Source: RMDB library OK3TST, as collected in RNAgym. Chemical mapping of a 207-nucleotide RNA with 2A3 and DMS.
RNA sequence: GGGAACGACUCGAGUAGAGUCGAAAACAAUCGACAGCUGGUGAUUCAGGUUCACCUGUCACUCAAGGCGGUAAACUUGUUGGCAUUCAUUAUGGAUCGAAUAAAGCAGGUUACGCCGUGAUGUCAGACCAGUACGGGAGUUUAUCAUCAACAAAUCGUUAGGCAUUAAGUUCGCUUAAUGCCUAACAAAAGAAACAACAACAACAAC
Reactivity to 2A3 in 0.01 (KOAc 150mM, MgCl2 10mM, bicine 150mM(pH8.5), 24C), signal-to-noise 3, nucleotides 027 to 156: c010a000a040u080c020g050a010c050a020g000c000u020g000g000u040g040a050u140u090c060a050g000g110u080u080c050a090c090c000u000g000u010c030a010c060u000c000a010a040g020g000c030g090g000u170a060a020a080c010u030u020g040u030u050g140g000c040a030u000u020c030a020u050u260a140u300g170g030a050u090c110g010a040a040u070a100a060a010g010c010a000g000g030u000u000a020c000g000c000c000g000u010g000a020u100g030u040c020a020g030a110c010c010a000g010u010a020c000g000g030g010a050g000u050u060u070a090u120c050a030u190c010a000a100c020a040a250a260u230c060
Reactivity to DMS in 0.01 (KOAc 150mM, MgCl2 10mM, bicine 150mM(pH8.5), 24C), signal-to-noise 1, nucleotides 027 to 156: c050a100a180u020c050g050a080c050a150g040c040u040g000g040u000g070a060u010u000c110a110g020g050u010u010c090a030c050c000u010g040u000c060a080c090u000c030a050a050g010g010c010g000g000u000a050a070a040c020u000u000g020u010u000g020g000c160a060u000u010c020a090u010u000a210u010g040g010a060u000c050g010a140a060u000a060a060a080g000c020a050g010g010u010u010a020c030g000c000c010g010u020g000a050u000g020u000c060a070g000a230c060c070a060g000u000a040c050g010g000g000a190g010u000u000u000a020u000c010a090u000c050a020a100c050a100a060a070u010c070
Reactivities are given for positions 27 through 156.
The DMS profile rests on 2,216 reads.